[RMDB]
RNA sequence: GGGAACGACUCGAGUAGAGUCGAAAACAACAUCGUGACGCUUGAAGUCUGCGGGCCGAUGGGCGAAAAAGUGAAUGCUUUUUAUGGCCUUACCGGCGACGGGAAAACGGCGGUGAUUGAGAUGGCGUGUGAGUGUUUUGUUCGCAAAACACUCACAAAAAGAAACAACAACAACAAC
Reactivity to 2A3 in 0.01 (KOAc 150mM, MgCl2 10mM, bicine 150mM(pH8.5), 24C), signal-to-noise 1, nucleotides 027 to 126: c020a030a000c020a020u080c060g080u100g220a040c010g050c060u070u150g070a060a020g110u020c030u100g010c010g040g000g000c000c010g020a040u000g020g060g000c020g030a000a020a000a000a000g060u080g220a270a050u290g000c000u010u010u000u050u110a100u200g280g000c000c000u080u060a100c010c030g060g000c030g010a060c050g010g010g000a000a130a030a070c040g010g000c020g010g000u060g020a180u050u100g010a100g050a100u050g020g000c060g000
Reactivity to DMS in 0.01 (KOAc 150mM, MgCl2 10mM, bicine 150mM(pH8.5), 24C), signal-to-noise 1, nucleotides 027 to 126: c070a060a060c050a060u010c020g010u000g010a130c020g010c040u000u000g010a150a210g010u000c020u000g010c060g020g010g010c030c010g000a050u010g010g000g010c000g010a050a000a010a010a030g040u000g000a120a090u000g030c000u000u000u000u020u000a090u010g000g020c010c000u000u000a040c040c010g030g010c040g000a090c010g000g000g000a040a040a080a160c130g000g010c040g010g020u010g000a120u010u020g010a080g010a090u000g000g020c190g000